[RMDB]
RNA sequence: GGGAACGACUCGAGUAGAGUCGAAAAUAAUUCAUGGAUUGCAUUAAUAACUGAAUCAGUAUGAGAUACUUGAAAUUCACCAGCAGCAGGGUUUUGUUGGGAUAUACAUAAUUUCUCCAUGACUCUGUCAAAAUAGCAGGUUCGCCUGCUAUUUUGAAAAAGAAACAACAACAACAAC
Reactivity to 2A3 in 0.01 (KOAc 150mM, MgCl2 10mM, bicine 150mM(pH8.5), 24C), signal-to-noise 6, nucleotides 027 to 126: u100a020a070u030u010c010a020u050g030g050a080u110u100g070c020a010u030u170a180a180u200a210a090c080u060g100a080a070u140c050a070g090u060a050u090g170a120g040a150u060a090c020u030u080g030a060a120a110u050u070c070a080c150c000a020g020c010a000g020c010a030g030g080g030u000u040u040u040g050u020u080g010g000g010a010u020a010u010a100c020a010u150a090a070u110u010u030c020u000c020c000a010u010g000a020c000u020c010u010g050
Reactivity to DMS in 0.01 (KOAc 150mM, MgCl2 10mM, bicine 150mM(pH8.5), 24C), signal-to-noise 3, nucleotides 027 to 126: u040a080a080u020u010c000a020u000g010g000a040u000u010g000c050a030u050u050a110a110u040a150a060c120u000g000a100a090u020c050a030g010u010a000u020g000a230g000a130u000a010c010u000u000g040a040a030a060u010u020c080a080c010c020a080g000c220a140g010c010a020g020g010g010u010u000u000u000g010u020u030g000g000g000a020u010a020u020a070c210a050u000a060a040u020u000u000c020u000c040c000a000u010g000a010c030u000c030u000g000